Structure probing data (2A3 and DMS) for a 177-nucleotide construct.

RNA sequence: GGGAACGACUCGAGUAGAGUCGAAAAGAUAUGGAAGAGGAACUACAUUGUCGCUCCCAACAGCAUGCUUUAAAUCGGAAACGAUUUAAAGCAUGACAUGGGAAAAGUCAAUGCCUCUUCCUAAGUCGCUGAAAAAUAUGUUCGCAUAUUUUUCAGCAAAAGAAACAACAACAACAAC
Reactivity to 2A3 in 0.01 (KOAc 150mM, MgCl2 10mM, bicine 150mM(pH8.5), 24C), signal-to-noise 2, nucleotides 027 to 126: g030a060u160a050u180g010g010a000a010g010a070g070g010a080a060c130u250a030c300a010u010u000g050u030c010g050c100u010c000c000c000a020a010c010a020g180c000a000u000g010c020u020u000u030a010a000a000u000c000g030g020a100a020a080c010g000a030u010u000u000a000a000a010g050c010a010u000g000a020c000a050u050g020g000g050a010a160a040a090g020u060c010a000a010u010g030c000c000u000c010u000u020c020c000u000a000a000g010u010c120
Reactivity to DMS in 0.01 (KOAc 150mM, MgCl2 10mM, bicine 150mM(pH8.5), 24C), signal-to-noise 2, nucleotides 027 to 126: g020a070u000a290u020g010g000a040a010g000a000g000g000a200a030c070u040a300c000a020u010u010g000u010c010g020c300u000c000c020c000a040a100c300a170g000c000a000u000g000c000u000u000u000a000a010a010u000c000g000g000a080a080a260c000g020a010u000u000u000a010a000a010g000c010a000u000g010a010c110a150u000g000g000g000a020a040a160a160g010u000c000a010a000u010g030c000c000u010c010u000u000c000c000u000a000a040g020u010c050
The DMS profile rests on 1,744 reads. Conditions: 150 mM KOAc, 10 mM MgCl2 and 150 mM bicine (pH 8.5), 24 C. Source: RMDB library TTRINS, as collected in RNAgym. High 2A3 reactivity points to a flexible backbone, as in loops and unpaired stretches. DMS adducts were read by reverse transcription with MarathonRT.